[RMDB]
RNA sequence: GGGAACGACUCGAGUAGAGUCGAAAAUGUGUGAUAAGGUACGUUCUCUCAAAUUGAGUGAUAAUAAUUGUUAUCUUAAUGCAGUUAUUAUGACACUUGAUUUAUUGAAGGACAUUAAAUUUGUUAUGACGGCCAACGUUCGCGUUGGCCAAAAGAAACAACAACAACAAC
Reactivity to DMS in 0.01 (KOAc 150mM, MgCl2 10mM, bicine 150mM(pH8.5), 24C), signal-to-noise 1, nucleotides 027 to 129: u040g020u000g020u030g000a020u000a110a130g030g040u060a120c300g000u010u010c030u010c040u040c000a160a000a120u020u020g000a040g010u000g000a000u000a000a090u000a060a000u010u010g000u000u140a100u000c300u020u060a080a130u090g020c010a010g050u050u000a030u000u000a000u020g050a250c020a030c070u050u030g000a020u000u000u050a250u000u050g040a060a020g050g020a030c000a040u130u060a020a130a060u030u140u000g030u000u030a000u070g000a000c140
Reactivity to 2A3 in 0.01 (KOAc 150mM, MgCl2 10mM, bicine 150mM(pH8.5), 24C), signal-to-noise 2, nucleotides 027 to 129: u150g100u000g000u030g060a050u090a020a100g180g000u000a090c060g000u000u000c050u000c000u000c060a000a000a000u000u000g010a000g000u000g000a010u000a000a000u000a000a000u000u040g000u060u070a090u120c100u110u300a060a030u220g000c010a000g000u000u000a000u000u000a000u020g140a030c000a000c030u000u020g010a000u030u000u070a150u080u040g030a100a010g000g010a000c000a030u000u160a000a090a110u100u100u060g050u020u010a080u050g050a000c020